[RMDB]
The record gives the reactivity of an RNA of 177 nucleotides to DMS and 2A3.
RNA sequence: GGGAACGACUCGAGUAGAGUCGAAAAGAAAGAAACAUCACCCUAUGGAAAAGAAAGGCAGCCACACAAGAAACCUGAGGAAACAGGAAGCCACAACGUGCGCCAUGUGGUUACCAAAGGGAGAAAAGAUAGUGAUCCGUUUCGACGGAUCACUAUCAAAAGAAACAACAACAACAAC
Reactivity to DMS in 0.01 (KOAc 150mM, MgCl2 10mM, bicine 150mM(pH8.5), 24C), signal-to-noise 2, nucleotides 027 to 126: g010a050a090a070g000a090a010a030c130a100u020c080a160c010c000c010u000a110u020g000g040a110a050a070a130g030a010a130a110g030g000c000a100g000c100c010a020c100a100c070a050a160g000a040a140a070c040c000u000g000a140g020g000a130a080a140c040a020g000g000a130a070g000c150c000a000c090a040a010c170g040u010g010c010g000c060c040a050u000g000u020g000g020u000u000a060c010c000a060a050a070g000g010g010a080g000a040a040a040a080
Reactivity to 2A3 in 0.01 (KOAc 150mM, MgCl2 10mM, bicine 150mM(pH8.5), 24C), signal-to-noise 3, nucleotides 027 to 126: g100a000a070a000g070a030a070a000c040a040u110c020a020c000c000c010u030a050u060g040g040a050a010a060a120g090a040a080a070g010g020c030a050g030c060c010a040c000a010c000a060a090g100a250a020a030c000c000u010g000a050g030g280a110a020a130c000a010g000g030a070a000g010c010c000a060c000a100a050c100g100u160g000c020g000c020c000a000u020g000u000g030g000u020u010a000c000c010a060a040a000g050g000g000a030g040a030a050a000a020
The 2A3 profile rests on 2,253 reads.
It was measured as part of the RMDB library OK1LIB.